[RMDB]
RNA sequence: GGGAACGACUCGAGUAGAGUCGAAAACUGCCGCGGGGACGCAGUGAUCCUCGCAGGGUCGCACGGUCGCCUCGGGUCGGCCUCGUGUCGGCUCGACCUGCGAGGGGAGCGAGUGGCGAGCCCGACCAAAACUUUCUCGCCUUCGGGCGAGAAAGAAUCAAUCAUCUCACUUCGGUGAGAUGAUUGAAAAAGAAACAACAACAACAAC
Reactivity to 2A3 in 0.01 (KOAc 150mM, MgCl2 10mM, bicine 150mM(pH8.5), 24C), signal-to-noise 2, nucleotides 027 to 156: c040u110g010c030c010g050c010g000g070g030g030a060c040g000c050a220g160u000g030a010u000c000c000u010c020g000c000a000g050g040g040u120c100g000c100a080c090g080g060u070c040g020c000c010u030c020g000g000g000u020c010g020g000c010c010u120c130g280u300g040u090c010g000g000c000u020c000g020a070c000c000u000g000c000g000a010g000g010g000g010a010g000c010g010a030g010u040g000g020c000g000a050g020c010c050c000g020a040c000c040a040a090a000a110c000u000u000u000c000u010c000g010c000c000u060u050c280g090g000g000c000g010a000g000a000a000a000g000a000a030
Structure probing data (2A3) for a 207-nucleotide construct.
It was measured as part of the RMDB library M2RFPK.
Reactivities are given for positions 27 through 156.
The RNA was probed in 150 mM KOAc, 10 mM MgCl2 and 150 mM bicine (pH 8.5) at 24 C.